Description: An RNA of 177 nucleotides, treated with 2A3 and DMS and read out base by base. Conditions: 150 mM KOAc, 10 mM MgCl2 and 150 mM bicine (pH 8.5), 24 C. The data come from the RNA Mapping Database (RMDB), libraries RFM100 and RFMREP. Values are in units of 0.01, from 0 to 300, in steps of 10. For DMS the reverse transcriptase was MarathonRT. For 2A3, 15,530 sequencing reads were counted.
[RMDB]
RNA sequence: GGGAACGACUCGAGUAGAGUCGAAAACUGCUCCCUCUCUUCUCUCUGCUAGAGACCAGAGGCCUUGAAGGAAGGAAGCCCAAGGGUCUCUCCUGGCUCUGCUUCCCCAUCACUGCCUCCACUUCCCCCUAGACAAACCAUUCGUGGUUUGUCUAGGAAAAGAAACAACAACAACAAC
Reactivity to 2A3 in 0.01 (KOAc 150mM, MgCl2 10mM, bicine 150mM(pH8.5), 24C), signal-to-noise 8, nucleotides 027 to 126: c020u050g020c010u030c010c000c000u020c010u000c010u040u010c020u000c000u000c010u030g050c040u070a030g010a050g020a190c020c020a020g010a020g020g000c000c010u040u050g050a080a030g050g030a060a120g050g030a050a010g030c020c030c030a060a070g050g000g020u030c030u000c010u020c090c040u040g010g000c000u010c010u030g020c010u020u020c010c000c000c000a020u040c010a010c020u020g020c000c000u020c020c000a050c020u010u010c000c000c000
Reactivity to DMS in 0.01 (KOAc 150mM, MgCl2 10mM, bicine 150mM(pH8.5), 24C), signal-to-noise 3, nucleotides 027 to 126: c040u000g020c040u000c040c000c000u000c040u000c000u010u010c020u020c010u010c020u010g030c090u060a070g000a120g000a110c120c080a050g000a070g030g000c030c050u000u010g000a110a150g000g010a130a110g010g010a130a060g010c040c280c080a140a150g000g000g030u010c020u010c120u000c200c050u010g000g010c020u000c000u000g010c030u000u000c000c000c000c030a050u020c050a070c040u010g000c010c000u010c010c080a070c140u000u000c000c000c000